Structure probing data (DMS and 2A3) for a 177-nucleotide construct. Source: RMDB library OK1LIB, as collected in RNAgym. Conditions: 150 mM KOAc, 10 mM MgCl2 and 150 mM bicine (pH 8.5), 24 C.

[RMDB]
RNA sequence: GGGAACGACUCGAGUAGAGUCGAAAAAAAGAAUGGUCAGGAUAUCAUAAGAUUGAAAAAGCAUUAUACGAAGAUAAGAAAAUUGAUGAUGUGACUAAAAAAGAUGCACAACAAUUAUUGAAAGAUGUCAUAUGUAGGCGUUCGCGCCUACAUAUGAAAAAGAAACAACAACAACAAC
Reactivity to DMS in 0.01 (KOAc 150mM, MgCl2 10mM, bicine 150mM(pH8.5), 24C), signal-to-noise 3, nucleotides 027 to 126: a050a010a060g000a080a050u000g000g010u010c020a080g040g020a100u020a040u000c060a150u030a070a120g000a050u020u020g000a060a050a050a120a110g000c040a030u010u000a060u020a170c140g010a110a090g000a070u010a020a080g000a010a050a000a070u010u010g000a070u000g010a020u000g000u000g020a110c030u040a000a110a060a050a020a040g000a120u040g000c090a020c070a050a110c100a030a010u020u000a080u040u000g010a070a060a130g010a050u090g000
Reactivity to 2A3 in 0.01 (KOAc 150mM, MgCl2 10mM, bicine 150mM(pH8.5), 24C), signal-to-noise 2, nucleotides 027 to 126: a000a020a000g100a010a080u090g050g000u100c100a040g000g180a040u040a000u200c000a040u080a140a030g050a100u150u080g090a120a060a000a030a000g020c000a010u080u110a060u180a050c190g040a020a120g000a120u120a160a060g150a150a060a060a000u070u030g020a040u020g010a020u050g010u010g070a080c050u120a000a000a000a150a060a000g080a070u080g040c020a010c010a130a080c010a000a070u130u110a020u110u210g050a020a100a080g040a020u180g040